RNA sequence: GGGAACGACUCGAGUAGAGUCGAAAAUCUCCAUAGACAUAGGCUCUCUCUUAAGGAGUUGAUGAUGUAUGCCGCUGAUCCAGCCAUGCACAUUGCCUCCUCUAACGCUUUUCUUGAUUUGAGGACACAUUUCCUAGUACUUCGGUACUAGGAAAUGAAAAGAAACAACAACAACAAC
Reactivity to DMS in 0.01 (KOAc 150mM, MgCl2 10mM, bicine 150mM(pH8.5), 24C), signal-to-noise 3, nucleotides 027 to 126: u000c040u000c000c060a120u010a080g000a080c110a100u000a090g010g010c040u000c020u010c040u010c090u000u010a130a040g000g000a030g000u000u000g000a020u000g000a120u000g030u000a020u000g000c150c230g010c020u000g020a140u030c150c050a020g020c040c020a030u020g000c030a050c000a010u000u000g000c200c010u000c010c010u000c100u010a060a070c160g000c070u000u000u000u000c040u000u000g010a130u000u000u020g010a080g010g000a060c150a180
Reactivity to 2A3 in 0.01 (KOAc 150mM, MgCl2 10mM, bicine 150mM(pH8.5), 24C), signal-to-noise 3, nucleotides 027 to 126: u000c010u000c020c010a050u080a080g050a010c020a040u120a050g040g000c000u000c010u000c000u000c000u090u060a030a040g030g000a000g000u010u020g010a010u020g010a030u010g020u000a020u030g120c130c050g000c040u050g050a240u120c120c010a010g020c000c010a010u020g000c010a000c000a010u000u020g000c000c000u000c000c000u040c020u040a070a020c040g050c060u080u070u080u020c030u030u110g130a210u060u030u170g070a050g040g000a000c020a010
Description
Structure probing data (DMS and 2A3) for a 177-nucleotide construct. 2A3 adducts were read by reverse transcription with SuperScript II with manganese.